[RMDB]
RNA sequence: GGGAACGACUCGAGUAGAGUCGAAAACGGUUAUCCUGCGAUUUUUGACGAGGUUCGGCAGGAAUGCCAAAUCAACAAUGCGCAUGUUGUCGCCGGAUGUGGAUCCGGGUAUCAAAGCGUUUAUAGCGAAUAGUGUACAGUUCGCUGUACACUAUUCAAAAGAAACAACAACAACAAC
Reactivity to DMS in 0.01 (KOAc 150mM, MgCl2 10mM, bicine 150mM(pH8.5), 24C), signal-to-noise 6, nucleotides 027 to 126: c150g010g020u000u000a120u010c010c030u000g020c010g000a040u000u010u000u000u000g010a130c150g020a130g000g020u000u000c070g020g040c010a010g010g020a070a160u000g010c010c000a060a090a080u010c060a090a130c120a070a060u000g010c020g010c010a120u010g000u000u000g010u000c150g010c010c000g000g000a020u000g010u010g010g000a050u000c000c000g010g000g020u000a060u000c070a040a070a120g020c060g010u000u000u000a090u000a110g010c300
Reactivity to 2A3 in 0.01 (KOAc 150mM, MgCl2 10mM, bicine 150mM(pH8.5), 24C), signal-to-noise 1, nucleotides 027 to 126: c020g020g030u070u070a050u090c010c000u000g050c030g050a020u010u080u030u090u260g110a080c050g010a040g020g030u120u070c040g130g010c000a000g100g000a020a000u020g000c020c010a000a010a100u110c020a020a090c030a070a160u190g000c000g000c000a040u140g030u130u120g040u140c050g030c170c030g000g010a030u050g090u170g300g040a020u000c010c000g000g000g040u030a010u120c000a070a070a010g000c000g010u160u190u080a230u070a070g020c010

Structure probing data (DMS and 2A3) for a 177-nucleotide construct. The DMS profile rests on 7,818 reads. DMS adducts were read by reverse transcription with MarathonRT. The RNA was probed in 150 mM KOAc, 10 mM MgCl2 and 150 mM bicine (pH 8.5) at 24 C.